[RMDB]
RNA sequence: GGGAACGACUCGAGUAGAGUCGAAAACUGGAGACGGCAGGCUGGAAGACUGCCAGUGCCGACGAACUCAGGAACGGCACGUCGGGAUCAAACACGGCCACGUCCGUCCGCACGCGCGCCAUUAGCGUCCCCGGGGGCGCACAGGCCGAGCGCGGGCGCAUGGUACUCCCUUCGGGGAGUACCAUGCAAAAGAAACAACAACAACAAC
Reactivity to 2A3 in 0.01 (KOAc 150mM, MgCl2 10mM, bicine 150mM(pH8.5), 24C), signal-to-noise 2, nucleotides 027 to 156: c060u090g070g010a050g010a030c020g030g080c140a040g010g000c010u010g030g020a000a010g020a020c030u080g060c040c030a020g010u000g000c000c040g060a050c060g050a200a140c140u170c160a060g130g010a230a030c000g000g000c010a010c020g060u040c100g080g000g000a100u130c050a090a150a050c080a040c150g020g020c010c000a040c030g090u030c010c020g000u010c000c000g020c000a010c000g050c000g020c050g000c000c000a040u150u210a050g000c000g000u040c010c010c000c020g240g000g000g010g000c010g000c000a000c020a030g030g000c010c050g050a030g020c000g030c010g020g020g000c020

An RNA of 207 nucleotides, treated with 2A3 and read out base by base.